[RMDB]
This 177-nucleotide RNA was probed chemically with DMS and 2A3. Reactivities are given for positions 27 through 126. The data come from the RNA Mapping Database (RMDB), library OK1LIB. 2A3 adducts were read by reverse transcription with SuperScript II with manganese.

RNA sequence: GGGAACGACUCGAGUAGAGUCGAAAAGGGAGGCGAUCUCGCGGUAGAGGAUCUCGUCUAUCUUGGUUUGGUUAUGGAAGAAGCGCUUCCAGGGAUUCAUCCGCUUGAGCGACGGGUACGGAACGCCUACUUGCAACCAGUUCGCUGGUUGCAAGUAAAAAGAAACAACAACAACAAC
Reactivity to DMS in 0.01 (KOAc 150mM, MgCl2 10mM, bicine 150mM(pH8.5), 24C), signal-to-noise 3, nucleotides 027 to 126: g020g000g000a050g010g020c030g000a080u000c030u010c030g030c100g010g010u010a100g020a140g000g010a040u010c040u020c000g000u020c030u020a120u010c020u010u010g010g000u020u010u020g000g010u010u010a080u000g000g000a050a030g000a270a160g050c260g000c000u000u000c000c000a060g010g030g010a110u010u020c020a080u010c010c030g000c040u010u000g000a030g000c130g000a040c040g040g000g010u020a140c070g000g030a100a050c060g030c030c030
Reactivity to 2A3 in 0.01 (KOAc 150mM, MgCl2 10mM, bicine 150mM(pH8.5), 24C), signal-to-noise 6, nucleotides 027 to 126: g020g030g020a030g000g010c020g040a060u040c040u030c070g140c030g070g050u110a070g040a050g140g060a080u060c010u010c020g030u000c040u030a050u040c020u050u090g080g020u100u070u110g090g000u110u100a090u120g030g020a020a030g030a100a040g070c170g040c160u020u010c010c020a040g060g100g000a060u110u090c010a020u040c020c010g060c080u030u090g000a010g030c020g040a040c010g000g010g010u070a030c030g010g030a060a010c020g020c000c000